[RMDB]
Source information: The data come from the RNA Mapping Database (RMDB), library M2PK90. Chemical mapping of a 177-nucleotide RNA with DMS. For DMS the reverse transcriptase was MarathonRT. Reactivities are rounded to 0.1 and cut off at 0 and 3. Reactivities are given for positions 27 through 126. Conditions: 150 mM KOAc, 10 mM MgCl2 and 150 mM bicine (pH 8.5), 24 C.
RNA sequence: GGGAACGACUCGAGUAGAGUCGAAAAAAAAAGGAGGAUGAGAAAUAUAGAGAGAGAUCGGUACUCCCUCGCGCGUCUCUCACUGAUAAGAGGGAUAAGAGGAUGAUUAUGAGAUAGCGCGCAAAAAGUCAAGUAUACUCUUCGGAGUAUACUUGACAAAAGAAACAACAACAACAAC
Reactivity to DMS in 0.01 (KOAc 150mM, MgCl2 10mM, bicine 150mM(pH8.5), 24C), signal-to-noise 1, nucleotides 027 to 126: a060a000a100a120a030g000g000a010g000g010a080u010g010a070g020a080a070a050u020a050u010a120g000a030g010a040g010a030g000a010u000c080g000g000u000a080c060u000c010c000c010u000c080g000c050g020c030g000u000c140u010c000u000c040a080c170u000g000a050u000a030a060g000a080g000g010g010a090u010a050a090g010a080g010g000a060u000g010a090u010u000a090u010g000a060g000a050u000a060g010c000g000c040g020c130a040a020a080a060a020